[RMDB]
RNA sequence: GGGAACGACUCGAGUAGAGUCGAAAAGGGGAUGGCGGCGCAGGAUCAGGUGUCCGUCAUCAAGGUUCUGUGCCUGGUGCUGCACCUCGGCGAGCUUGAUUUCGUGGCACCGGAGGAGGGCGGGGCGGACGGCCUGGUCAUUCGUGACCAGGCCGUCAAAAGAAACAACAACAACAAC
Reactivity to 2A3 in 0.01 (KOAc 150mM, MgCl2 10mM, bicine 150mM(pH8.5), 24C), signal-to-noise 2, nucleotides 027 to 126: g010g000g000g030a130u030g100g060c060g000g000c000g000c020a010g060g140a070u100c040a050g120g000u040g020u080c000c000g050u000c030a000u000c000a000a030g020g000u130u020c010u050g090u090g010c040c000u060g000g020u030g020c120u060g050c000a080c050c050u090c120g030g000c090g000a070g040c000u120u120g090a090u090u090u110c070g010u040g030g000c000a010c000c000g000g000a040g020g000a060g000g010g040c090g060g000g000g000c070g000
The data come from the RNA Mapping Database (RMDB), library OK1LIB. Structure probing data (2A3) for a 177-nucleotide construct. Values cover nucleotides 27 to 126. The reactions ran in a buffer of 150 mM KOAc, 10 mM MgCl2 and 150 mM bicine (pH 8.5), at 24 C. For 2A3, 781 sequencing reads were counted.